Chemical mapping of a 177-nucleotide RNA with DMS and 2A3. Reactivities are given for positions 27 through 126. High 2A3 reactivity points to a flexible backbone, as in loops and unpaired stretches. The RNA was probed in 150 mM KOAc, 10 mM MgCl2 and 150 mM bicine (pH 8.5) at 24 C.
[RMDB]
RNA sequence: GGGAACGACUCGAGUAGAGUCGAAAACACGGCUUACCGUCGGGAGAACGAAAUAAUAAUGCGCCGUGCGUCCACGGCGAGGCGGGGCGAAAGAGCGGAAGCAUAUAGAGAACGUUAGAAAGAGGAAAUGCGUUUUAGUGUUCGCACUAAAACGCAUAAAAGAAACAACAACAACAAC
Reactivity to DMS in 0.01 (KOAc 150mM, MgCl2 10mM, bicine 150mM(pH8.5), 24C), signal-to-noise 1, nucleotides 027 to 126: c080a100c080g010g000c030u000u000a040c030c030g010u000c020g000g030g040a060g010a080a070c040g020a050a130a110u040a100a090u010a110a110u040g010c020g010c030c000g000u000g000c210g030u000c060c060a080c030g000g000c030g010a030g010g040c050g000g000g010g080c060g000a110a020a090g020a170g000c010g000g000a050a050g010c040a060u000a060u010a060g010a130g010a070a110c050g000u010u000a020g010a040a010a040g000a040g000g000a030a090
Reactivity to 2A3 in 0.01 (KOAc 150mM, MgCl2 10mM, bicine 150mM(pH8.5), 24C), signal-to-noise 1, nucleotides 027 to 126: c020a000c000g050g010c030u050u080a220c020c000g040u000c100g000g140g030a100g070a030a040c090g050a010a030a120u250a060a040u140a110a010u240g080c000g060c000c010g000u000g070c070g000u160c210c000a050c020g050g000c030g020a010g020g030c000g000g020g010g000c020g050a000a130a060g050a000g000c020g010g020a090a020g000c010a040u120a000u060a200g110a010g020a070a070c030g010u070u000a170g050a120a070a000g080a000g020g150a120a150